[RMDB]
RNA sequence: GGGAACGACUCGAGUAGAGUCGAAAAAUAUACUUAAAUUUGGGCAAAAUUGCAUGUAUGUAUGUGUACAUAUGUGUGCAUAUACUCUAGAUUUAUAUACUCUUUUGUCCUAAUGGAUGGAUAGAAACAUUUUACUGGAUUUCGAUCCAGUAAAAUGAAAAGAAACAACAACAACAAC
Reactivity to DMS in 0.01 (KOAc 150mM, MgCl2 10mM, bicine 150mM(pH8.5), 24C), signal-to-noise 3, nucleotides 027 to 126: a100u010a060u030a020c010u010u020a110a070a030u010u000u010g000g020g010c000a000a010a010a000u000u000g010c100a010u000g000u010a030u000g010u000a010u000g020u000g000u010a020c000a090u040a090u050g010u010g040u000g000c010a000u000a010u000a010c030u020c180u020a100g000a160u050u030u010a010u000a040u010a050c010u000c010u000u000u000u000g010u000c010c000u000a010a010u010g000g020a190u010g010g010a050u000a020g000a120a070a160
Reactivity to 2A3 in 0.01 (KOAc 150mM, MgCl2 10mM, bicine 150mM(pH8.5), 24C), signal-to-noise 6, nucleotides 027 to 126: a000u090a020u040a090c020u070u150a010a030a060u010u010u030g000g000g000c000a000a000a010a020u040u030g030c060a050u050g030u070a050u100g000u000a010u000g030u000g010u010a000c020a030u210a130u300g300u060g000u000g080c000a000u000a000u000a010c010u040c040u090a040g010a130u050u240u000a120u020a010u040a070c000u010c000u000u000u000u000g000u000c000c000u010a020a000u000g040g010a050u060g010g030a020u040a090g130a030a070a000